[RMDB]
An RNA of 177 nucleotides, treated with DMS and 2A3 and read out base by base. High 2A3 reactivity points to a flexible backbone, as in loops and unpaired stretches. The 2A3 profile rests on 1,363 reads. The data come from the RNA Mapping Database (RMDB), library TTRDEL. 2A3 adducts were read by reverse transcription with SuperScript II with manganese. The DMS profile rests on 657 reads. For DMS the reverse transcriptase was MarathonRT.
RNA sequence: GGGAACGACUCGAGUAGAGUCGAAAAGAUAUGGAAGCUUGUCAGCGAUCUCACACUAUUCGGAAACGAACGAAUGUGAUCUCGCUUGGAUUUAGCUUCCUAAGUCAAACUAUGGUUCGCCAUAGAACCAACCCUAGAACUUCGGUUCUAGGGUUGGAAAAGAAACAACAACAACAAC
Reactivity to DMS in 0.01 (KOAc 150mM, MgCl2 10mM, bicine 150mM(pH8.5), 24C), signal-to-noise 1, nucleotides 027 to 126: g000a070u000a300u010g000g010a060a010g030c000u010u010g000u000c000a000g000c010g000a000u000c270u010c000a020c000a020c070u000a300u000u000c000g030g010a140a050a280c060g010a040a070c060g000a080a120u030g000u010g000a000u000c140u000c000g000c030u000u000g030g030a000u000u010u010a000g000c020u000u000c000c000u000a060a040g000u000c010a090a070a170c000u010a000u000g000g000u010u000c300g000c000c030a060u000a000g000a100a300
Reactivity to 2A3 in 0.01 (KOAc 150mM, MgCl2 10mM, bicine 150mM(pH8.5), 24C), signal-to-noise 1, nucleotides 027 to 126: g060a000u050a030u200g020g010a000a000g010c010u040u040g000u020c010a000g000c010g010a000u000c020u030c000a030c010a010c050u080a080u030u030c020g070g040a140a190a090c040g050a050a010c060g050a300a300u040g030u020g000a020u010c010u020c040g040c010u050u140g100g020a010u300u220u210a000g010c000u000u000c010c010u010a070a020g050u000c030a120a020a110c020u020a060u020g050g000u060u110c290g050c070c000a000u010a020g040a030a030